[RMDB]
RNA sequence: GGGAACGACUCGAGUAGAGUCGAAAAGGGUGUGUUUGUACCGCGUCCGGAGACCGAAGCCAUUUUGGCCUGGGCCACCGCGCAGUCGCUGCCGGCGCGGCCGCUGAUUGUCGACGCAUGCACGGGAUCGUACAUCAAGCUUCGGCUUGAUGUACGAAAAAGAAACAACAACAACAAC
Reactivity to DMS in 0.01 (KOAc 150mM, MgCl2 10mM, bicine 150mM(pH8.5), 24C), signal-to-noise 2, nucleotides 027 to 126: g010g000g010u010g000u000g000u010u000u020g010u010a120c080c050g000c040g010u010c040c040g000g010a140g010a060c040c010g000a090a140g010c020c040a150u010u010u010u010g010g010c020c050u000g000g000g010c010c010a090c080c040g000c100g000c010a070g010u000c110g020c060u010g000c020c030g000g000c130g000c050g010g000c080c070g020c050u010g000a090u000u000g020u000c050g020a070c020g020c070a100u000g020c020a050c040g000g000g020a130
Reactivity to 2A3 in 0.01 (KOAc 150mM, MgCl2 10mM, bicine 150mM(pH8.5), 24C), signal-to-noise 1, nucleotides 027 to 126: g040g020g000u070g010u020g030u070u100u120g060u030a080c050c000g000c010g030u020c070c010g060g010a020g010a080c010c020g070a020a000g010c000c000a090u110u130u140u300g010g020c020c010u130g000g090g120c030c000a030c000c010g020c010g000c010a000g020u090c080g010c190u050g030c000c000g070g000c150g000c070g050g000c000c010g000c040u070g050a120u070u040g020u070c010g020a060c000g010c060a040u080g010c080a040c070g030g040g020a030
Chemical mapping of a 177-nucleotide RNA with DMS and 2A3. For 2A3 the reverse transcriptase was SuperScript II with manganese.